[RMDB]
RNA sequence: GGGAACGACUCGAGUAGAGUCGAAAAGAAUGUAAGGGCGUAAUCGCGCCUUGACGUGAGUGAGACAAGACAGAAGGCUAUCCAAAGUAAGAUAGCAUAGCUCACAAUACGCUGAUCUGUCAUAGAACCAUCACUCGACUUUCGAGUCGAGUGAUGGAAAAGAAACAACAACAACAAC
Reactivity to 2A3 in 0.01 (KOAc 150mM, MgCl2 10mM, bicine 150mM(pH8.5), 24C), signal-to-noise 2, nucleotides 027 to 126: g000a040a060u220g000u100a020a010g030g020g000c000g010u060a030a300u180c100g000c010g000c000c000u050u020g060a020c020g000u020g020a040g000u000g000a030g070a100c030a080a140g030a000c010a000g030a030a000g120g000c000u000a000u000c000c000a180a000a000g090u050a050a090g050a000u030a000g000c020a000u020a030g020c000u000c030a000c000a000a030u300a080c140g050c030u060g030a220u030c000u000g080u000c000a000u040a230g090a080a020
Reactivity to DMS in 0.01 (KOAc 150mM, MgCl2 10mM, bicine 150mM(pH8.5), 24C), signal-to-noise 2, nucleotides 027 to 126: g000a200a020u000g010u030a020a100g020g000g050c020g010u010a110a090u040c190g000c000g000c000c010u000u000g020a080c070g060u000g020a270g000u000g030a020g040a210c140a090a210g000a010c020a090g030a090a180g000g010c010u000a000u020c080c070a050a140a140g020u020a100a210g000a000u000a020g030c040a080u000a020g000c010u000c040a080c080a060a060u090a090c090g000c100u000g020a200u000c010u000g000u000c010a130u020a020g010a120a150
Chemical mapping of a 177-nucleotide RNA with 2A3 and DMS. The RNA was probed in 150 mM KOAc, 10 mM MgCl2 and 150 mM bicine (pH 8.5) at 24 C. 2A3 adducts were read by reverse transcription with SuperScript II with manganese. The data come from the RNA Mapping Database (RMDB), library OK1LIB.